An RNA of 177 nucleotides, treated with 2A3 and DMS and read out base by base. The RNA was probed in 150 mM KOAc, 10 mM MgCl2 and 150 mM bicine (pH 8.5) at 24 C. Reactivities are given for positions 27 through 126. Source: RMDB library RFM100, as collected in RNAgym. For 2A3, 463 sequencing reads were counted. DMS (dimethyl sulfate) methylates the pairing face of unpaired adenines and cytosines.

[RMDB]
RNA sequence: GGGAACGACUCGAGUAGAGUCGAAAAGCCGACAUGCUCAUUGGACACAGUGGGCAGGGAGAAAUCUUAAGAGUUCGGGCUCUGGGGAUAGUAUGCUCGCAAGGGUGAAAAUUAAAGAAAUUGACGGAUAGUGAAACCAGUUCGCUGGUUUCACUAUAAAAGAAACAACAACAACAAC
Reactivity to 2A3 in 0.01 (KOAc 150mM, MgCl2 10mM, bicine 150mM(pH8.5), 24C), signal-to-noise 1, nucleotides 027 to 126: g010c000c000g040a010c020a080u000g000c020u000c000a000u000u120g070g040a040c040a010c000a220g000u030g000g000g050c000a000g180g000g000a220g050a070a020a190u070c000u180u060a230a010g000a000g060u090u170c090g120g000g000c070u050c080u110g080g000g000g000a000u010a050g100u040a010u150g030c000u000c060g000c000a000a010g000g000g000u010g030a060a030a020a020u240u250a170a020a000g020a050a020a050u130u160g090a080c110g000g020
Reactivity to DMS in 0.01 (KOAc 150mM, MgCl2 10mM, bicine 150mM(pH8.5), 24C), signal-to-noise 2, nucleotides 027 to 126: g030c000c000g000a140c080a200u000g020c000u010c010a000u000u000g010g010a240c300a130c000a020g040u000g000g000g000c030a060g010g000g000a050g010a120a060a050u010c030u040u010a060a120g030a120g010u010u010c080g020g020g000c010u000c020u010g000g000g000g000a100u040a010g000u010a060u030g000c010u010c000g000c140a080a090g000g000g020u000g000a060a050a090a070u020u040a060a040a050g000a070a070a110u030u000g000a100c150g000g000